[RMDB]
RNA sequence: GGGAACGACUCGAGUAGAGUCGAAAAUGUAGGUAUUUCAAAUGAUAACUUUAAGGUCAUCUUUAAUGACAAAGAUAGCUAUUUGCAGUAUGUAGAGGGGAACACUCUUAUUUAUAAGGGUGUGCGCCCUUCCAGUAGAGUUCGCUCUACUGGAAGGAAAAGAAACAACAACAACAAC
Reactivity to DMS in 0.01 (KOAc 150mM, MgCl2 10mM, bicine 150mM(pH8.5), 24C), signal-to-noise 5, nucleotides 027 to 126: u020g010u000a070g020g020u000a020u000u000u000c020a010a030a030u000g010a090u000a030a070c030u010u010u010a140a120g020g010u000c010a020u010c270u020u010u010a070a040u000g000a050c050a040a020a050g010a080u000a020g010c080u010a030u000u000u000g000c070a040g010u000a020u000g020u010a070g010a080g000g000g000g010a210a010c000a010c000u000c000u000u000a020u010u010u010a080u000a030a010g000g000g010u000g010u000g010c210g020c090
Reactivity to 2A3 in 0.01 (KOAc 150mM, MgCl2 10mM, bicine 150mM(pH8.5), 24C), signal-to-noise 4, nucleotides 027 to 126: u210g040u080a060g140g000u010a050u010u090u030c020a010a000a060u050g030a050u040a110a070c020u060u090u160a180a060g130g010u020c000a010u030c000u060u200u180a300a070u050g010a010c020a010a010a010g060a030u080a020g020c060u060a050u080u040u070g000c020a010g020u060a030u080g140u090a040g030a050g090g020g020g030a010a010c000a000c000u030c000u030u030a060u070u210u020a250u050a040a000g000g010g020u000g000u010g000c010g110c010
Record summary: Chemical mapping of a 177-nucleotide RNA with DMS and 2A3.